Chemical mapping of a 177-nucleotide RNA with DMS and 2A3. Values cover nucleotides 27 to 126. For DMS, 5,084 sequencing reads were counted. DMS adducts were read by reverse transcription with MarathonRT. The 2A3 profile rests on 6,389 reads. The reactions ran in a buffer of 150 mM KOAc, 10 mM MgCl2 and 150 mM bicine (pH 8.5), at 24 C.

RNA sequence: GGGAACGACUCGAGUAGAGUCGAAAAGAAAGGCAGCCAAUGCAGCCCACGUAGCCAGUCGAUGCAUGCUUUUGCAUGCCGCCCACGACUGAGGGCAGCUGCGGCACUGAGGGCAGCUGCCGAAAGACACGUCGUAAUGAUUCGUCAUUACGACGUGAAAAGAAACAACAACAACAAC
Reactivity to DMS in 0.01 (KOAc 150mM, MgCl2 10mM, bicine 150mM(pH8.5), 24C), signal-to-noise 5, nucleotides 027 to 126: g020a100a140a160g010g010c020a020g010c020c090a080a120u000g000c080a090g000c040c030c040a110c130g010u000a090g020c050c020a020g000u000c020g020a140u000g010c010a020u000g010c000u000u000u000u010g020c000a020u000g000c010c220g000c050c030c070a260c040g000a040c050u010g010a160g020g020g010c050a070g010c000u000g010c050g000g030c140a090c140u000g020a080g030g010g000c060a070g010c020u000g000c020c000g000a020a050a090g010a230
Reactivity to 2A3 in 0.01 (KOAc 150mM, MgCl2 10mM, bicine 150mM(pH8.5), 24C), signal-to-noise 4, nucleotides 027 to 126: g080a030a060a010g050g000c010a000g010c020c070a070a060u230g020c040a010g030c000c000c010a030c040g060u030a030g060c030c020a020g030u030c040g050a030u190g000c000a000u010g000c010u110u290u210u300g000c010a000u010g000c000c010g020c000c020c010a070c020g080a020c030u070g040a160g020g090g000c010a010g020c000u010g000c000g000g040c030a020c080u070g030a200g010g040g000c010a010g000c010u000g010c000c010g000a010a010a010g050a020